[RMDB]
RNA sequence: GGGAACGACUCGAGUAGAGUCGAAAAGAUAUGGAGCGUGAACUACGCUCCAGGAGGAGCUCGGAAACGAGCUCUACCCACCCGGAGCGCACGCUCCUAAGUCAAAAGUCCGAGUUCGCUCGGACAACGGAAUACACUAGUUCGCUAGUGUAUUCCGAAAAGAAACAACAACAACAAC
Reactivity to DMS in 0.01 (KOAc 150mM, MgCl2 10mM, bicine 150mM(pH8.5), 24C), signal-to-noise 3, nucleotides 027 to 126: g000a070u000a300u020g030g000a000g020c010g020u010g010a170a060c190u000a300c020g010c000u000c000c000a000g030g000a300g020g000a030g020c000u010c000g000g010a050a090a240c010g000a040g000c000u000c000u000a040c090c030c200a190c050c030c030g000g000a020g000c000g000c040a030c040g000c010u000c000c000u010a010a090g000u000c050a100a070a100a080g000u000c000c020g000a020g000u000u000c190g000c000u010c000g000g000a000c000a040a060
Reactivity to 2A3 in 0.01 (KOAc 150mM, MgCl2 10mM, bicine 150mM(pH8.5), 24C), signal-to-noise 3, nucleotides 027 to 126: g060a030u110a060u160g000g000a000g000c020g010u020g020a150a100c110u120a040c300g020c000u040c010c000a010g020g000a030g020g000a000g000c010u020c050g000g030a030a060a030c000g000a000g000c010u010c000u010a000c000c000c000a070c010c090c050g000g000a010g000c020g020c010a010c040g000c000u030c000c010u000a030a010g020u010c010a000a030a100a100g010u000c000c000g000a000g020u050u160c260g020c120u000c010g010g010a010c000a000a010